[RMDB]
RNA sequence: GGGAACGACUCGAGUAGAGUCGAAAAGUCAGGAGAAACAGAAAGAGACGGCCAAGUGUGAGCAGCAGAUGGCAAAAGUACAGAAACUAGAAGAGAGCUUGCUUGCUACUGAAAAAGUGAUCAGUUCACGCCUGAGAAGAUUCGUCUUCUCAGGCGUAAAAGAAACAACAACAACAAC
Reactivity to DMS in 0.01 (KOAc 150mM, MgCl2 10mM, bicine 150mM(pH8.5), 24C), signal-to-noise 1, nucleotides 027 to 126: g030u000c100a050g030g010a030g050a080a050a050c090a040g010a070a130a100g010a070g000a060c110g120g010c020c050a070a090g040u010g040u000g010a120g040c070a070g000c040a030g030a060u000g010g030c020a020a110a070a020g030u020a020c080a140g010a070a000a090c060u020a020g000a060a080g000a170g000a070g000c030u000u000g000c050u000u010g020c080u000a050c060u000g020a050a030a060a040a070g010u000g000a100u000c070a040g000u030u010c090